Structure probing data (DMS and 2A3) for a 177-nucleotide construct. The 2A3 profile rests on 14,839 reads. For 2A3 the reverse transcriptase was SuperScript II with manganese. It was measured as part of the RMDB library OK2TST.
RNA sequence: GGGAACGACUCGAGUAGAGUCGAAAAGGAUCGGUUGAUUCGGCAAUCGAGAACAUGGAUUGGCUGACGUCGGCUGACGUUGCCGCGAAGGCUCUCGCCCGGUCGUAUGCCGACCAGAUCGACGCGGCACCGUCGAUUAUUUCGAUAAUCGACGGUGAAAAGAAACAACAACAACAAC
Reactivity to DMS in 0.01 (KOAc 150mM, MgCl2 10mM, bicine 150mM(pH8.5), 24C), signal-to-noise 8, nucleotides 027 to 126: g010g010a090u000c010g020g010u010u000g010a150u010u000c020g010g010c050a090a080u010c020g010a050g010a050a070c100a070u000g010g010a180u000u010g010g010c010u000g020a030c120g010u000c010g020g020c180u010g010a020c050g020u000u000g010c000c020g000c030g000a150a160g010g000c040u000c060u000c050g010c140c030c070g010g010u000c030g000u010a120u000g010c080c000g000a020c020c040a080g000a130u000c020g000a140c040g000c070g000g000
Reactivity to 2A3 in 0.01 (KOAc 150mM, MgCl2 10mM, bicine 150mM(pH8.5), 24C), signal-to-noise 7, nucleotides 027 to 126: g070g010a230u030c020g010g010u070u100g070a080u170u060c000g010g010c020a020a090u060c020g020a010g030a060a030c070a180u140g050g010a160u070u110g090g000c070u090g020a030c010g010u040c030g080g200c200u160g010a020c020g040u050u050g000c000c000g010c020g020a040a030g030g000c010u010c010u010c030g010c020c030c020g000g000u020c010g000u030a050u210g030c010c000g000a010c000c000a010g010a060u040c010g010a020c030g020c060g070g000